[RMDB]
RNA sequence: GGGAACGACUCGAGUAGAGUCGAAAAAGCCGCAAUCCCAGCCCAUGCCCGUUGAGGAGCAAGUGGUUUCGAUCUUCCUGGGCACCGGCGGUCACCUGGACUCGGUGCCCGUCGAGGACGUCCGGCGGUUACAUGAGGGUUUCGACCCUCAUGUAACAAAAGAAACAACAACAACAAC
Reactivity to DMS in 0.01 (KOAc 150mM, MgCl2 10mM, bicine 150mM(pH8.5), 24C), signal-to-noise 3, nucleotides 027 to 126: a100g010c020c020g040c110a140a110u000c010c010c010a170g000c010c010c020a300u000g000c000c000c010g000u010u020g020a240g000g000a080g020c020a020a050g040u010g010g010u000u000u000c030g020a130u000c020u000u000c010c060u010g000g000g000c010a020c020c010g010g010c200g010g000u000c020a100c200c170u010g000g000a050c040u010c040g000g000u000g010c010c000c010g010u000c080g000a020g000g010a050c080g000u010c180c070g000g020c040g010
Reactivity to 2A3 in 0.01 (KOAc 150mM, MgCl2 10mM, bicine 150mM(pH8.5), 24C), signal-to-noise 3, nucleotides 027 to 126: a000g000c000c020g000c060a010a100u050c000c010c010a010g010c020c010c000a050u080g010c020c020c000g090u110u300g170a130g040g060a120g030c010a040a060g060u210g140g050u030u060u070c090g100a210u000c010u020u030c010c010u040g020g000g000c000a010c010c000g120g030c180g050g010u030c020a090c060c150u190g220g030a050c020u010c110g000g000u020g010c000c010c000g000u010c010g010a000g010g020a030c010g000u010c020c030g030g000c000g020
Chemical mapping of a 177-nucleotide RNA with DMS and 2A3. Reactivities are given for positions 27 through 126. Conditions: 150 mM KOAc, 10 mM MgCl2 and 150 mM bicine (pH 8.5), 24 C. For DMS, 4,376 sequencing reads were counted.